[RMDB]
RNA sequence: GGGAACGACUCGAGUAGAGUCGAAAAAUCCUCCCCUGAGAGGCCUCUUCCUAGGUCCGGAGUCUACCUCCAUCUGGUCUGUUCGGGCCCUCUUCGCCGGGGGGGCUCCUUCCCCAUCCUUAUCCUUGAAUCACUGGGUUCGCCCAGUGAAAAAGAAACAACAACAACAAC
Reactivity to DMS in 0.01 (KOAc 150mM, MgCl2 10mM, bicine 150mM(pH8.5), 24C), signal-to-noise 7, nucleotides 027 to 129: a090u040c000c000u020c030c020c000c040u050g000a040g000a050g050g050c060c010u020c090u010u000c000c060u040a070g000g000u070c030c040g000g040a050g030u050c100u080a260c150c010u000c000c030a030u030c120u060g020g060u020c000u000g020u000u000c180g040g000g080c020c030c010u040c020u030u040c170g080c150c180g040g010g010g010g000g000g030c050u030c030c040u030u020c020c030c010c030a100u050c050c060u000u020a160u080c090c070u000u000g030a090a110
Reactivity to 2A3 in 0.01 (KOAc 150mM, MgCl2 10mM, bicine 150mM(pH8.5), 24C), signal-to-noise 9, nucleotides 027 to 129: a000u040c010c000u020c010c000c000c010u040g020a020g020a030g040g010c000c000u080c040u080u020c010c010u040a020g000g050u030c070c070g020g000a010g020u040c080u160a110c020c010u030c010c000a040u000c040u070g000g030u000c020u020g080u080u110c060g010g010g000c030c030c000u010c010u080u100c080g110c130c060g000g000g000g000g000g000g000c010u030c010c000u010u020c000c000c000c000a070u120c020c030u100u110a100u170c020c010u040u060g050a110a040